The record gives the reactivity of an RNA of 177 nucleotides to DMS. Conditions: 150 mM KOAc, 10 mM MgCl2 and 150 mM bicine (pH 8.5), 24 C.
[RMDB]
RNA sequence: GGGAACGACUCGAGUAGAGUCGAAAAAAUAAAAAAGCUACUAGUACAUAAAACAUUACAGUGAUUUUUGUUGUGGUAAUUCCACUUUGGGCAAAAGGGCAGCUCGUUCUAUGGUCAUUUGGCACUGGGUGCCAAGAAAAUUCGUUUUCUUGGCACCAAAAGAAACAACAACAACAAC
Reactivity to DMS in 0.01 (KOAc 150mM, MgCl2 10mM, bicine 150mM(pH8.5), 24C), signal-to-noise 2, nucleotides 027 to 126: a030a100u070a010a050a040a050a040a120g000c010u000a030c050u000a090g010u000a010c060a090u000a090a070a100a070c090a040u000u020a070c110a070g020u010g020a080u000u000u000u000u000g000u000u000g030u000g000g000u000a050a080u000u000c030c020a040c050u000u010u000g030g010g000c020a040a040a050a070g000g000g000c000a080g010c080u000c030g010u000u000c030u000a090u010g020g000u000c020a080u010u000u000g000g010c070a050c130u000g030